Structure probing data (2A3) for a 207-nucleotide construct. Values cover nucleotides 27 to 156. Source: RMDB library OK3TST, as collected in RNAgym.
RNA sequence: GGGAACGACUCGAGUAGAGUCGAAAAUGAUUCGAAAGAUUUGACCAUACUGAUACAUUCACUAGUAACCUUAGUUACUAAUGAGUAAUGGUUUUGAGUUAAUCAGUUAGGCCUGAACUACUUUUCUGGAAGUUAGUAAAUUAUCUCACAGGCAGCCGUGAUUGCAUCUGUUCGCAGAUGCAAUCACAAAAGAAACAACAACAACAAC
Reactivity to 2A3 in 0.01 (KOAc 150mM, MgCl2 10mM, bicine 150mM(pH8.5), 24C), signal-to-noise 2, nucleotides 027 to 156: u180g010a030u040u150c060g040a130a030a040g130a020u010u150u180g040a040c000c000a010u060a030c050u020g050a040u050a070c080a150u010u040c000a020c050u000a020g000u020a020a010c040c080u180u150a090g000u010u010a010c000u000a000a040u030g040a000g010u080a060a050u140g020g030u080u140u260u080g060a060g040u110u130a030a050u050c090a020g030u010u160a060g060g010c090c000u020g000a030a000c000u020a000c000u130u000u120u150c120u210g180g030a010a010g020u040u090a000g000u040a010a260a140u170u110a080u180c020u060c010a030c000a060g070g010c000a010g070c000c110
Conditions: 150 mM KOAc, 10 mM MgCl2 and 150 mM bicine (pH 8.5), 24 C.